RNA sequence: GGGAACGACUCGAGUAGAGUCGAAAAGCUCGGAGACGAGCAAGGCUGACAAAACGCUGUCCCAACCUCCACGUGGUGUCGGCUGGAUAAUGCUGCAUUAUGUUGCAUUUAUCAACUGGGAAGAAAACAUAAUUAUGCCAUUCGUGGCAUAAUUAUGAAAAGAAACAACAACAACAAC
Reactivity to 2A3 in 0.01 (KOAc 150mM, MgCl2 10mM, bicine 150mM(pH8.5), 24C), signal-to-noise 9, nucleotides 027 to 126: g000c000u000c000g020g020a120g020a060c010g000a000g000c000a000a050g030g000c010u010g010a030c030a030a110a050a020c090g020c090u070g060u040c010c000c000a010a050c010c020u060c020c030a100c090g070u110g020g010u020g020u030c000g010g010c020u040g030g000a010u010a030a010u020g000c020u030g000c020a070u110u140a130u300g020u020u030g000c010a010u050u070u120a040u040c020a020a050c050u050g010g010g040a060a050g050a030a090a010a000
Reactivity to DMS in 0.01 (KOAc 150mM, MgCl2 10mM, bicine 150mM(pH8.5), 24C), signal-to-noise 9, nucleotides 027 to 126: g010c020u000c010g000g000a210g010a210c010g000a010g020c000a110a090g000g010c010u000g000a040c060a050a040a080a060c050g010c110u020g000u010c010c010c010a110a110c080c030u020c050c060a210c030g010u000g000g020u010g020u000c030g000g000c020u000g000g010a020u010a020a020u000g000c000u000g010c010a180u040u060a080u050g020u000u010g010c010a010u000u010u020a020u000c010a120a090c140u010g010g000g010a080a060g000a080a070a090a180
An RNA of 177 nucleotides, treated with 2A3 and DMS and read out base by base. The DMS profile rests on 30,867 reads. The RNA was probed in 150 mM KOAc, 10 mM MgCl2 and 150 mM bicine (pH 8.5) at 24 C. It was measured as part of the RMDB library OK1LIB. Reactivities are given for positions 27 through 126. For DMS the reverse transcriptase was MarathonRT.